[RMDB]
RNA sequence: GGGAACGACUCGAGUAGAGUCGAAAAACAGUACCAGCUGCUACGGCACCUGGUACUGAACUUUCAUGGAGUUAAGAAACCACGUAAACAAAGCGGAACCGAAAAGCUAAACGAGUAGGAAGAAUAAAUAGGUACCACCACUUCGGUGGUGGUACAACGUACAGAUGGCGUUCGCGCCAUCUGUACGAAAAGAAACAACAACAACAAC
Reactivity to 2A3 in 0.01 (KOAc 150mM, MgCl2 10mM, bicine 150mM(pH8.5), 24C), signal-to-noise 1, nucleotides 027 to 156: a000c000a000g010u000a000c010c000a000g000c000u010g000c000u070a100c230g080g000c000a000c000c000u000g000g040u010a000c000u000g000a000a000c000u030u020u100c010a080u090g150g010a150g140u020u050a090a140g120a190a030a040c000c030a020c060g010u090a020a200a040c130a090a110a000g000c000g030g030a150a080c010c000g030a010a000a000a000g000c010u190a210a000a000c020g000a000g000u000a000g070g020a070a030g040a180a000u240a110a010a090u090a040g070g070u000a000c000c000a010c000c000a000c020u010u030c200g090g000u000g000g000u000g000g000u000a000c000a000a000